[RMDB]
RNA sequence: GGGAACGACUCGAGUAGAGUCGAAAAGCCGAGCAGCCAACGAGGCAACAGCAUGAAGUUGGCGCCCAGGAACGCGGAGACCGCCCCCGACGCGAUGGCCACCGAGUUCAUCGUGACCACCUGUUCGUCCCUAGCUGUGAUUCGUCACAGCUAGGGAAAAAGAAACAACAACAACAAC
Reactivity to DMS in 0.01 (KOAc 150mM, MgCl2 10mM, bicine 150mM(pH8.5), 24C), signal-to-noise 1, nucleotides 027 to 126: g070c040c020g010a050g010c060a060g000c040c010a010a190c050g030a120g000g000c000a030a060c210a070g000c010a120u000g020a130a180g000u000u000g020g000c010g000c000c110c010a050g010g010a100a000c160g020c000g000g000a220g000a100c080c020g050c000c000c050c020c000g000a060c050g000c000g010a040u000g010g000c000c000a150c090c090g030a080g000u000u000c080a150u000c010g090u030g000a070c010c000a070c300c030u010g000u020u000c010g030
Reactivity to 2A3 in 0.01 (KOAc 150mM, MgCl2 10mM, bicine 150mM(pH8.5), 24C), signal-to-noise 3, nucleotides 027 to 126: g020c000c000g030a010g010c050a010g020c000c000a010a000c020g040a100g110g000c050a060a090c010a080g090c030a090u180g080a140a010g010u000u030g000g000c000g020c000c000c000a020g000g040a130a050c070g010c000g030g020a050g040a020c030c040g050c000c020c000c010c020g010a020c020g020c020g030a030u040g010g000c050c000a090c040c070g020a090g080u100u120c000a010u010c020g030u040g060a050c020c020a060c000c020u010g030u100u060c010g040

Notes:
An RNA of 177 nucleotides, treated with DMS and 2A3 and read out base by base. The RNA was probed in 150 mM KOAc, 10 mM MgCl2 and 150 mM bicine (pH 8.5) at 24 C. Values cover nucleotides 27 to 126. For 2A3 the reverse transcriptase was SuperScript II with manganese. The DMS profile rests on 1,114 reads.